[RMDB]
RNA sequence: GGGAACGACUCGAGUAGAGUCGAAAAGAUGGAAACACAGAAUGGGAUUUGUUUGCAAAGCGUCUCAAAGAACUUUGUGGAAAGAACAGCCAUGGUCUAAGCUGUAAUACUGGUCAAAGCUUGUUUCAUGGUACUCAAAGAAGAUGAACUUAAGGAAGCAUUUACCAGUAUUCGUACUGGUAAAUGCAAAAGAAACAACAACAACAAC
Reactivity to DMS in 0.01 (KOAc 150mM, MgCl2 10mM, bicine 150mM(pH8.5), 24C), signal-to-noise 2, nucleotides 027 to 156: g000a110u000g010g000a080a040a140c100a110c080a090g010a130a160u000g020g010g030a180u000u000u000g000u000u000u000g000c030a020a060a090g040c030g000u000c080u000c070a130a140a150g000a140a040c030u000u000u020g020u020g000g000a090a090a150g020a050a070c030a080g020c000c020a020u010g010g010u000c020u010a070a090g050c000u000g010u000a080a110u000a100c090u000g040g010u000c080a160a050a040g000c010u000u000g020u000u010u000c010a030u000g010g010u000a040c060u000c060a030a070a050g010a040a060g020a140u000g020a060a070c060u000u000a040a060g020g010a110a210
Reactivity to 2A3 in 0.01 (KOAc 150mM, MgCl2 10mM, bicine 150mM(pH8.5), 24C), signal-to-noise 5, nucleotides 027 to 156: g030a020u050g030g010a060a100a010c030a010c030a050g110a120a090u060g010g000g040a030u070u070u130g070u040u050u130g030c040a040a030a020g020c030g080u020c020u040c080a130a160a040g050a020a060c020u040u040u040g020u040g040g040a070a090a060g040a100a020c040a020g010c000c000a010u030g000g030u000c020u050a010a010g000c000u000g020u060a060a070u130a200c090u110g090g020u080c030a110a060a010g020c000u010u000g010u030u080u040c010a010u010g000g010u060a050c010u020c060a070a080a020g060a020a040g050a060u110g030a060a040c050u090u130a100a000g110g000a060a020

This 207-nucleotide RNA was probed chemically with DMS and 2A3. The DMS profile rests on 3,352 reads. For 2A3, 3,083 sequencing reads were counted. DMS adducts were read by reverse transcription with MarathonRT.